[RMDB]
RNA sequence: GGGAACGACUCGAGUAGAGUCGAAAAGGCAGCUUCUUGAUUAUCAUUGGUUCUUGCUGAGGAAUGUAUUCUAAUUAGGCCAGUUACCAACACAUAAGAUUCGAUGUUUAUAAAAUGCUGGAUGAGGCUGUAGAAUCAUGUUCGCAUGAUUCUACAGAAAAGAAACAACAACAACAAC
Reactivity to DMS in 0.01 (KOAc 150mM, MgCl2 10mM, bicine 150mM(pH8.5), 24C), signal-to-noise 5, nucleotides 027 to 126: g010g020c040a030g010c050u010u010c030u000u010g000a130u000u000a050u000c080a110u000u000g000g010u000u000c020u010u010g020c090u000g010a130g000g000a050a050u000g010u010a050u010u000c050u000a060a160u030u000a120g010g010c030c040a030g010u010u010a080c080c030a020a080c180a070c130a050u000a050a070g000a130u000u000c090g010a050u000g000u000u000u000a060u010a050a060a060a070u010g010c010u000g010g000a070u010g000a100g000g000
Reactivity to 2A3 in 0.01 (KOAc 150mM, MgCl2 10mM, bicine 150mM(pH8.5), 24C), signal-to-noise 4, nucleotides 027 to 126: g060g010c020a000g000c020u040u030c000u090u140g050a080u070u130a040u110c050a020u010u060g040g000u020u040c010u010u030g000c030u020g030a050g040g050a060a040u070g040u140a150u060u070c020u030a110a170u100u030a020g020g060c010c020a000g020u020u020a030c010c010a040a010c030a010c010a060u120a120a060g050a090u100u110c040g040a050u040g060u020u120u010a140u050a040a130a040a040u090g010c020u040g050g000a070u060g000a020g130g000